Structure probing data (DMS and 2A3) for a 177-nucleotide construct. Conditions: 150 mM KOAc, 10 mM MgCl2 and 150 mM bicine (pH 8.5), 24 C. The 2A3 profile rests on 1,912 reads.
RNA sequence: GGGAACGACUCGAGUAGAGUCGAAAAGCGCUGUUUUCCAUCAGGAAAUACAGGCUACCGAAACAUGCGUCUCUAUGCAGGCGACAACCGGGAGGUUGACGUCCCUGCGAUAAGCCACGAGGCCAUCGUCAAUAGUGGUGUUCGCACCACUAUUGACAAAAGAAACAACAACAACAAC
Reactivity to DMS in 0.01 (KOAc 150mM, MgCl2 10mM, bicine 150mM(pH8.5), 24C), signal-to-noise 1, nucleotides 027 to 126: g020c000g020c010u040g000u000u000u000u010c010c000a300u010c260a070g070g000a010a000a010u000a030c000a000g000g000c030u000a220c000c020g010a200a060a150c200a100u030g000c140g000u000c000u030c010u000a230u000g030c020a030g000g000c030g000a170c000a020a010c030c000g010g010g010a140g040g030u000u010g000a130c030g000u010c130c010c010u000g000c000g000a090u000a040a090g000c110c070a110c220g020a060g000g030c010c030a010u010c250
Reactivity to 2A3 in 0.01 (KOAc 150mM, MgCl2 10mM, bicine 150mM(pH8.5), 24C), signal-to-noise 2, nucleotides 027 to 126: g000c210g030c120u020g010u020u000u000u000c060c060a190u220c120a160g040g000a000a000a030u140a050c010a000g000g000c000u030a050c000c010g080a060a120a020c090a030u070g020c060g060u010c000u000c000u010a030u270g010c000a010g040g000c020g050a010c000a000a020c010c000g000g120g020a180g050g000u010u000g010a020c000g080u120c090c020c000u000g000c000g050a060u060a140a050g040c120c070a070c080g010a000g030g000c000c000a070u090c070